[RMDB]
RNA sequence: GGGAACGACUCGAGUAGAGUCGAAAAUCCACGUCUUCGGACGUGGAAAAAAGCGUACUACACACGGCGUGAGUAUGAUGACCUGCUCCCAAAUAGGAGCAGCAAGUACCACGAACUACCGUGUGUAUCGCAAAAAAACAGCGCUUCGGCGCUGUAAGUCUACUCUUGUCUUCGGACAAGAGUAGACAAAAGAAACAACAACAACAAC
Reactivity to 2A3 in 0.01 (KOAc 150mM, MgCl2 10mM, bicine 150mM(pH8.5), 24C), signal-to-noise 1, nucleotides 027 to 156: u040c000c000a000c000g000u040c000u030u110c250g040g000a000c000g000u040g030g120a010a010a000a000a010a000g000c010g070u070a070c010u000a000c030a000c000a010c000g000g000c010g000u010g000a250g030u000a010u040g100a160u030g040a040c020c000u000g000c000u030c000c000c000a050a240a020u150a100g010g050a000g010c000a000g000c000a000a260g000u000a000c040c000a010c000g040a140a060c070u180a110c190c010g010u000g000u000g000u000a000u020c000g000c000a000a000a000a000a220a000a000c000a000g000c000g040c000u150u140c300g070g040c000g000c000u010g000u040a010a000